[RMDB]
RNA sequence: GGGAACGACUCGAGUAGAGUCGAAAAGAUAUGGACCGAAUGGACUUUUGACGACGCAGAGGGUCGGAAACGACCCGAUCGUCGAUAAGUCCACGGUCCUAAGUCAAAAGUAGGCUUCGGCCUACAACAUUACAACGGCGUUCGCGCCGUUGUAAUGAAAAGAAACAACAACAACAAC
Reactivity to DMS in 0.01 (KOAc 150mM, MgCl2 10mM, bicine 150mM(pH8.5), 24C), signal-to-noise 2, nucleotides 027 to 126: g000a050u000a300u000g000g010a030c010c000g000a140a250u000g000g010a010c000u010u000u000u000g010a130c110g010a050c050g010c270a130g010a290g000g000g030u010c010g000g010a080a040a140c030g010a030c000c000c000g000a080u000c000g010u000c010g020a030u000a010a010g000u000c000c000a060c020g000g010u000c000c000u000a000a080g010u000c040a140a060a120a220g020u010a010g010g000c000u000u020c290g000g000c010c010u000a000c000a050a160
Source: RMDB library TTRDES, as collected in RNAgym.
This 177-nucleotide RNA was probed chemically with DMS.
The DMS profile rests on 1,066 reads.
The RNA was probed in 150 mM KOAc, 10 mM MgCl2 and 150 mM bicine (pH 8.5) at 24 C.
Values cover nucleotides 27 to 126.
For DMS the reverse transcriptase was MarathonRT.